[RMDB]
RNA sequence: GGGAACGACUCGAGUAGAGUCGAAAAGAUAUGGAGAAUCAAAGACAUGAUGUGGUACUCGGAAACGAGUACCCAUCAACAGCUUUAUUCUCCUAAGUCAAAAGCCGGUACGUUCGCGUACCGGCAACUUACCCAUAUGGUUCGCCAUAUGGGUAAGAAAAGAAACAACAACAACAAC
Reactivity to DMS in 0.01 (KOAc 150mM, MgCl2 10mM, bicine 150mM(pH8.5), 24C), signal-to-noise 3, nucleotides 027 to 126: g010a020u000a280u020g010g000a040g000a010a000u000c230a010a030a010g000a050c090a240u020g010a000u000g000u020g010g020u000a000c000u000c000g010g000a050a060a080c010g010a010g010u000a000c000c000c000a000u010c000a080a050c290a120g000c000u000u000u000a010u000u000c000u000c010c000u000a020a120g000u010c020a140a140a170a150g030c000c000g000g000u000a010c010g000u010u000c300g050c000g010u010a000c000c020g010g010c000a000a010
Reactivity to 2A3 in 0.01 (KOAc 150mM, MgCl2 10mM, bicine 150mM(pH8.5), 24C), signal-to-noise 2, nucleotides 027 to 126: g000a000u020a020u100g020g000a020g030a020a000u130c170a130a050a000g020a070c150a300u300g000a000u020g220u100g030g020u010a000c000u000c000g010g000a020a020a010c000g000a000g000u010a000c000c000c000a000u000c000a010a010c020a000g000c010u020u010u010a000u020u000c000u000c000c000u010a030a000g010u020c040a160a090a110a130g020c020c000g000g010u000a010c010g020u010u150c300g010c000g180u010a000c000c030g000g020c000a010a000